Annotation: Structure probing data (2A3) for a 207-nucleotide construct.

RNA sequence: GGGAACGACUCGAGUAGAGUCGAAAACCAUGUGUUCGCACAUGGAAAAAAGAUAUGGAAGUCUGAAGGCUUUUGACGCUCGAUACGUCGGAAACGACGUAUACCGAGCGAUAAGCCUCAGACUUCCUAAGUCAAAAAAGGGAGUUUCGACUCCCAACUCUAGCAUGACUUUCGAGUCAUGCUAGAGAAAAGAAACAACAACAACAAC
Reactivity to 2A3 in 0.01 (KOAc 150mM, MgCl2 10mM, bicine 150mM(pH8.5), 24C), signal-to-noise 2, nucleotides 027 to 156: c000c000a010u010g000u000g030u030u100c220g060c090a010c010a020u020g010g050a160a020a000a050a000a050g000a020u080a010u070g010g000a000a010g000u000c000u010g150a260a050g020g000c020u110u050u110u160g140a070c010g000c000u000c000g000a000u000a000c000g000u000c000g030g010a030a110a050c010g000a000c000g000u000a010u010a010c040c000g000a000g020c000g020a010u000a020a010g000c010c000u000c010a000g000a000c000u000u000c000c000u000a000a000g000u000c020a000a000a010a010a070a150g020g040g010a060g000u040u150u260c210g150a070c010u000c000c000c000a000a010